Description: This 177-nucleotide RNA was probed chemically with DMS and 2A3. Values are in units of 0.01, from 0 to 300, in steps of 10. As a SHAPE reagent, 2A3 marks flexible, mostly unpaired nucleotides at the ribose 2'-OH. Source: RMDB library OK1LIB, as collected in RNAgym. DMS adducts were read by reverse transcription with MarathonRT. The reactions ran in a buffer of 150 mM KOAc, 10 mM MgCl2 and 150 mM bicine (pH 8.5), at 24 C.

RNA sequence: GGGAACGACUCGAGUAGAGUCGAAAACAAUCUAUCUCUUAUCUUUCCUUUUGUCAAUGAUGCCGACCAAUUAAAACAAGCUAUUACAGUAUUGCGUCAGUAUGGCUUUACUGGGAAAGUCGGAACGCGUCAUAAAUCCCUUCGGGGAUUUAUGACGAAAAGAAACAACAACAACAAC
Reactivity to DMS in 0.01 (KOAc 150mM, MgCl2 10mM, bicine 150mM(pH8.5), 24C), signal-to-noise 2, nucleotides 027 to 126: c100a100a100u010c130u000a060u020c010u000c000u010u010a140u040c000u000u010u000c000c000u000u030u050u030g000u000c090a000a070u000g000a100u010g000c010c040g000a050c010c110a060a140u030u010a000a070a130a060c190a050a150g000c120u000a040u010u030a050c100a130g010u080a020u000u000g000c120g000u000c010a170g060u000a030u040g020g020c000u000u000u030a000c030u000g000g000g000a050a050a110g050u000c020g050g030a020a030c170g000
Reactivity to 2A3 in 0.01 (KOAc 150mM, MgCl2 10mM, bicine 150mM(pH8.5), 24C), signal-to-noise 5, nucleotides 027 to 126: c040a050a040u030c030u140a090u060c050u010c010u150u080a140u160c000u020u010u040c020c000u050u080u070u130g080u060c080a090a060u070g050a080u140g070c050c000g020a050c050c000a030a060u160u140a140a090a070a140c120a090a000g090c040u150a120u230u110a120c020a040g070u100a050u110u090g030c060g060u070c020a060g050u120a100u230g020g000c010u040u000u030a050c060u050g010g010g050a060a040a010g020u020c040g030g010a090a050c060g000